[RMDB]
RNA sequence: GGGAACGACUCGAGUAGAGUCGAAAAAAAAACGAUGAUCCAGUUGUAGCGGUGAUUAUCGUAGCUAUCAGCUGGAACAUCAAUCGGUGGCGACACCGAACGAUAACCGCAGACAUGCUGAAAAAAAUACUAUGUCUCAGUUCGCUGAGACAUAGUAAAAAGAAACAACAACAACAAC
Reactivity to 2A3 in 0.01 (KOAc 150mM, MgCl2 10mM, bicine 150mM(pH8.5), 24C), signal-to-noise 2, nucleotides 027 to 126: a010a000a000a000a010c070g000a000u010g000a030u000c000c000a020g000u000u000g000u010a010g020c020g010g180u130g110a170u140u260a190u300c050g020u040a010g000c010u030a020u190c020a000g000c000u000g000g000a000a000c000a010u000c000a000a020u000c000g000g000u000g000g000c040g030a020c000a000c000c000g000a000a000c010g030a020u050a090a050c010c060g000c010a000g050a130c030a110u060g020c040u120g110a110a070a010a010a000a020a000
Reactivity to DMS in 0.01 (KOAc 150mM, MgCl2 10mM, bicine 150mM(pH8.5), 24C), signal-to-noise 2, nucleotides 027 to 126: a050a010a060a050a080c220g000a000u000g010a060u010c010c000a050g000u010u000g000u000a050g010c000g020g040u020g010a180u000u010a080u000c090g020u010a180g020c010u000a020u000c020a000g020c010u010g000g000a020a050c050a000u000c000a120a140u010c010g000g000u010g000g000c270g010a250c010a000c010c000g000a020a060c180g010a080u000a100a110c030c040g000c030a030g010a110c220a040u000g010c040u000g000a000a000a020a070a020a050a140